[RMDB]
RNA sequence: GGGAACGACUCGAGUAGAGUCGAAAACGUGAACAUCGCUCUGCUAAGUCCCGUCGUUCUUCCAGUCAGAGCGAGAUUGUAAGCAACCUUAUGCGCAAUGAAGACAUAGAGGGACUUCUAUAAGAAGCAUAAUGACGGAGUUCGCUCCGUCAUUAUGAAAAGAAACAACAACAACAAC
Reactivity to DMS in 0.01 (KOAc 150mM, MgCl2 10mM, bicine 150mM(pH8.5), 24C), signal-to-noise 6, nucleotides 027 to 126: c140g000u020g000a120a120c100a120u010c000g030c010u000c000u000g010c130u010a070a060g000u030c050c020c070g020u000c030g010u010u000c010u000u030c040c060a080g010u040c000a000g010a030g000c000g010a030g010a060u010u000g000u010a070a160g010c070a050a150c090c040u010u010a020u010g010c040g000c070a120a060u010g010a110a080g010a080c070a050u020a050g020a060g000g000g010a080c010u000u010c070u010a060u000a100a100g010a060a050g000
Reactivity to 2A3 in 0.01 (KOAc 150mM, MgCl2 10mM, bicine 150mM(pH8.5), 24C), signal-to-noise 9, nucleotides 027 to 126: c050g120u140g080a050a020c020a090u010c000g000c000u010c000u010g040c050u060a100a000g060u070c020c010c010g050u050c020g010u040u010c000u110u020c000c000a040g100u130c010a010g010a010g030c050g000a010g010a020u040u080g030u120a090a070g020c010a040a090c030c040u120u130a040u120g030c050g010c050a030a080u190g040a110a050g050a040c030a060u140a030g140a070g030g010g010a010c000u010u010c030u050a280u040a160a060g060a030a000g040